[RMDB]
RNA sequence: GGGAACGACUCGAGUAGAGUCGAAAAAUAAUGGUGCGAGUAGGUUGUAUGUUUUGGUAACUCUGAUAUGGGUAGUAUUAUAUUGGGUAUAUAUGCGAACAAAGAUAACAUAUAAUCCAACAUCGUAUAACGAAUAGUCAUAAUCAGCCAAUUUUCCCUGAUUGCGUUCUUUCGAGAACGCAAUCAGAAAAGAAACAACAACAACAAC
Reactivity to 2A3 in 0.01 (KOAc 150mM, MgCl2 10mM, bicine 150mM(pH8.5), 24C), signal-to-noise 1, nucleotides 027 to 156: a000u170a020a030u050g000g000u050g140c130g050a110g080u040a050g040g050u010u060g010u030a190u000g000u030u000u020u090g030g010u000a050a070c040u040c010u020g050a040u040a000u080g000g000g060u050a030g040u010a000u200u020a010u050a080u080u020g000g000g000u090a090u000a000u000a020u300g010c080g040a080a000c040a090a190a040g040a030u170a080a000c000a000u000a000u020a000a000u050c020c000a000a110c030a160u100c060g010u030a010u050a140a040c050g020a180a160u010a080g140u080c010a010u060a040a100u020c000a010g000c060c030a030a020u000u000u000u000c110c000

Chemical mapping of a 207-nucleotide RNA with 2A3. The RNA was probed in 150 mM KOAc, 10 mM MgCl2 and 150 mM bicine (pH 8.5) at 24 C.